RNA sequence: GGGAACGACUCGAGUAGAGUCGAAAACUCAUUCUGAAAGGCCACAGUAAGCCAAGGAAACAGGGAUGACCUGUCAGAGACUAGAAUAGCUUCAUGGGGGAGUGAGAAAAGGUCAGAAAUGCUCUGGUGGAGGAAGAGAUGGCAGCUGGGACCGCUAGCCAUUUUAUGGAUUCGUCCAUAAAAUGGCAAAAGAAACAACAACAACAAC
Reactivity to 2A3 in 0.01 (KOAc 150mM, MgCl2 10mM, bicine 150mM(pH8.5), 24C), signal-to-noise 2, nucleotides 027 to 156: c030u050c040a080u090u060c020u020g110a150a090a060g040g020c000c020a040c070a140g050u150a050a060g010c030c040a030a020g060g020a070a120a050c020a060g090g030g010a040u100g080a110c000c010u000g030u010c010a040g020a000g010a090c090u090a070g010a150a110u100a030g050c040u150u150c120a110u110g000g000g030g000g000a020g010u080g030a050g020a010a120a040a010g020g010u020c000a010g080a070a180a000u120g000c000u030c010u090g070g040u030g020g000a040g020g000a010a010g010a000g000a040u040g030g010c010a010g000c020u020g000g030g040a070c000c030g010c050u110a040
Structure probing data (2A3) for a 207-nucleotide construct. The reactions ran in a buffer of 150 mM KOAc, 10 mM MgCl2 and 150 mM bicine (pH 8.5), at 24 C. Source: RMDB library OK3TST, as collected in RNAgym.